Structure probing data (DMS and 2A3) for a 177-nucleotide construct. Conditions: 150 mM KOAc, 10 mM MgCl2 and 150 mM bicine (pH 8.5), 24 C. 2A3 is a SHAPE reagent: it acylates the 2'-hydroxyl of flexible nucleotides of all four kinds.

RNA sequence: GGGAACGACUCGAGUAGAGUCGAAAAAGGCGUAUGGAAGUGCGGGAGGGGAUCGGUGCCCUCCUCUCCUUUGCCGGGGUAUACCUCAUCGUUCGUGAGGGGCUCAGGCUCACCGGCCGGCCUGCAGACGAUGAGAAAACUUCGGUUUUCUCAUCGUAAAAGAAACAACAACAACAAC
Reactivity to DMS in 0.01 (KOAc 150mM, MgCl2 10mM, bicine 150mM(pH8.5), 24C), signal-to-noise 3, nucleotides 027 to 126: a050g000g010c020g020u010a050u010g000g040a190a120g010u000g020c160g000g010g010a020g000g000g010g020a100u010c070g010g010u010g000c020c020c070u010c010c000u000c000u010c000c000u010u010u010g000c010c020g000g010g000g020u000a110u010a110c070c010u000c010a020u000c130g010u010u010c190g010u000g010a050g000g000g000g000c020u000c010a090g010g000c000u000c050a060c120c040g000g030c060c020g000g010c010c010u000g000c150a130g010
Reactivity to 2A3 in 0.01 (KOAc 150mM, MgCl2 10mM, bicine 150mM(pH8.5), 24C), signal-to-noise 2, nucleotides 027 to 126: a000g040g020c050g050u130a080u250g070g050a090a120g050u040g100c050g000g030g000a010g000g010g000g030a020u070c080g090g080u110g000c010c000c000u040c040c000u000c030u010c000c000u050u090u060g010c010c020g010g000g030g000u180a140u070a190c010c010u000c000a050u080c060g270u260u030c080g030u090g090a080g000g030g020g020c000u050c090a010g000g000c010u000c030a070c000c020g110g000c020c010g000g000c000c020u040g000c070a040g030